[RMDB]
RNA sequence: GGGAACGACUCGAGUAGAGUCGAAAAUCAGCAGCGCGAUCUGUAUUCCAAAUCCGUUUAAGAAUGACGGCAAACGGCCUGGACGUUCGGCAAUCUUCACCAAUACUGAGGAUUACUGGUGUGCGGCUGCGCUUUUUACAUUCGUGUAAAAAGCGCAAAAAGAAACAACAACAACAAC
Reactivity to DMS in 0.01 (KOAc 150mM, MgCl2 10mM, bicine 150mM(pH8.5), 24C), signal-to-noise 3, nucleotides 027 to 126: u000c050a070g010c030a050g000c040g000c070g000a050u020c000u010g030u020a090u000u000c020c030a130a190a090u010c000c060g030u000u000u030a090a150g030a110a040u000g000a000c000g010g000c300a030a100a120c150g000g000c060c010u000g000g040a010c000g000u030u010c010g010g020c080a000a040u020c000u000u000c000a000c080c040a100a030u000a140c300u030g000a030g020g000a060u010u000a050c070u000g010g010u000g000u020g000c050g020g010c020
Reactivity to 2A3 in 0.01 (KOAc 150mM, MgCl2 10mM, bicine 150mM(pH8.5), 24C), signal-to-noise 4, nucleotides 027 to 126: u080c000a000g000c010a000g030c050g020c010g030a070u060c000u000g040u030a090u050u000c010c010a020a020a040u080c010c010g030u040u050u080a150a090g060a080a090u170g010a020c000g030g020c010a050a080a030c040g040g000c010c010u080g000g030a000c020g010u080u100c030g030g020c040a020a040u020c010u030u010c020a040c070c030a160a030u100a230c060u020g020a010g060g000a010u000u020a010c020u020g030g000u030g030u060g040c030g040g000c010